[RMDB]
RNA sequence: GGGAACGACUCGAGUAGAGUCGAAAACGCCGCGCACACGGCCGGGUUCGUCUGCGCGUACGGGCCGCCGAUCAGGUCGAUGCAAUAUGGCACCGCAGCAAAAAUGCCCGGCACCUCGACCUUGCCACAUCAGGUAUCAUUUCGAUGAUACCUGAUGAAAAGAAACAACAACAACAAC
Reactivity to 2A3 in 0.01 (KOAc 150mM, MgCl2 10mM, bicine 150mM(pH8.5), 24C), signal-to-noise 3, nucleotides 027 to 126: c020g040c010c020g000c010g000c010a020c010a000c050g050g000c010c060g190g010g020u080u070c020g050u020c020u050g040c040g000c030g030u050a050c030g040g020g010c000c020g020c030c020g050a140u120c070a030g010g060u040c020g020a050u100g010c040a090a140u090a160u290g060g000c000a010c050c020g000c040a040g000c010a050a110a090a050a080u110g010c020c020c000g000g020c010a010c000c010u020c010g020a050c020c000u030u110g030c020c020a050
Reactivity to DMS in 0.01 (KOAc 150mM, MgCl2 10mM, bicine 150mM(pH8.5), 24C), signal-to-noise 5, nucleotides 027 to 126: c060g020c270c000g020c050g020c040a060c110a080c080g020g020c030c110g010g020g030u010u010c060g010u000c070u000g010c030g020c060g020u010a070c070g000g000g000c060c050g010c030c040g010a080u000c160a080g020g020u010c030g010a080u010g000c060a090a120u000a080u020g000g010c030a090c060c020g000c070a070g010c080a020a050a070a100a100u010g010c000c050c040g010g020c030a070c070c040u000c030g000a030c030c020u000u000g010c070c080a220
This 177-nucleotide RNA was probed chemically with 2A3 and DMS. The RNA was probed in 150 mM KOAc, 10 mM MgCl2 and 150 mM bicine (pH 8.5) at 24 C. For DMS the reverse transcriptase was MarathonRT. The data come from the RNA Mapping Database (RMDB), library OK2TST. Values cover nucleotides 27 to 126.